[RMDB]
This 177-nucleotide RNA was probed chemically with 2A3 and DMS.
It was measured as part of the RMDB library 15KREP.
The RNA was probed in 150 mM KOAc, 10 mM MgCl2 and 150 mM bicine (pH 8.5) at 24 C.
For DMS the reverse transcriptase was MarathonRT.
The DMS profile rests on 1,238 reads.
RNA sequence: GGGAACGACUCGAGUAGAGUCGAAAAACACAUACUGAUAUUGGUGUCUACAUUAGUAUGUCACUUGUAUUAGUCAUUGUAGUGAAGAGAUUGUACAACCCAUCACUUUCUAACUUUGCGUUAGCAUCUCAUAAUCUGGGUUCGCCCAGAUUAUGAGAAAAGAAACAACAACAACAAC
Reactivity to 2A3 in 0.01 (KOAc 150mM, MgCl2 10mM, bicine 150mM(pH8.5), 24C), signal-to-noise 4, nucleotides 027 to 126: a000c020a000c000a000u050a020c000u010g000a020u000a020u040u030g010g000u010g000u000c010u010a020c010a130u130u080a090g020u020a040u220g020u020c000a010c020u030u010g000u010a040u010u030a000g020u020c090a070u020u100g050u080a200g010u020g050a080a030g060a010g030a090u080u160g050u100a060c010a040a100c040c010c010a030u060c010a020c040u100u180u060c010u020a050a050c010u070u140u270g020c060g010u020u000a010g020c010a070u010
Reactivity to DMS in 0.01 (KOAc 150mM, MgCl2 10mM, bicine 150mM(pH8.5), 24C), signal-to-noise 2, nucleotides 027 to 126: a070c060a040c100a030u000a030c000u020g000a020u000a030u000u010g000g020u000g000u000c010u010a030c050a210u000u010a110g020u000a010u000g020u000c040a010c020u030u020g010u020a020u000u000a000g000u010c230a040u000u010g040u000a040g030u020g000a040a080g000a120g000a060u020u000g000u010a110c120a080a150c030c030c020a050u010c020a060c090u000u000u010c020u000a000a070c070u010u020u010g020c200g010u010u000a030g010c300a100u000